An RNA of 177 nucleotides, treated with 2A3 and DMS and read out base by base. Values cover nucleotides 27 to 126. For 2A3, 2,715 sequencing reads were counted. The DMS profile rests on 1,616 reads. For 2A3 the reverse transcriptase was SuperScript II with manganese. It was measured as part of the RMDB library OK1LIB.

RNA sequence: GGGAACGACUCGAGUAGAGUCGAAAACUGACGCCUACAUUGCUUUCCUGGAAGAUUUUCGUACUUUCUGGAUAGAGUUUCGGUUCGACCCCGGCGGGUCGUACGCCAGCCCUCCACGGUACGCAUGCCAGGGGUAAUGGUUCGCCAUUACCCCUGGAAAAGAAACAACAACAACAAC
Reactivity to 2A3 in 0.01 (KOAc 150mM, MgCl2 10mM, bicine 150mM(pH8.5), 24C), signal-to-noise 5, nucleotides 027 to 126: c020u020g050a010c030g020c000c010u060a050c030a170u080u240g040c010u090u010u020c000c000u010g060g010a050a040g100a170u080u100u080u220c110g020u100a070c010u030u070u030c020u060g010g030a020u040a060g080a020g020u010u060u110c060g000g000u020u020c020g020a030c030c000c000c000g140g040c080g030g060g010u030c010g000u040a060c040g000c030c020a040g030c020c000c000u020c010c020a030c030g000g050u050a040c060g020c070a020u140g040
Reactivity to DMS in 0.01 (KOAc 150mM, MgCl2 10mM, bicine 150mM(pH8.5), 24C), signal-to-noise 1, nucleotides 027 to 126: c140u040g000a070c060g020c000c000u000a090c110a040u000u010g000c000u000u000u000c000c020u000g000g000a060a030g000a120u000u020u000u020c120g000u020a050c030u020u000u030c050u000g000g030a030u010a080g000a030g000u000u030u010c070g000g000u000u020c010g020a120c000c000c000c080g040g020c150g000g000g000u000c050g010u010a010c140g000c060c020a090g000c020c000c000u000c020c030a070c090g000g000u010a070c100g010c150a160u020g010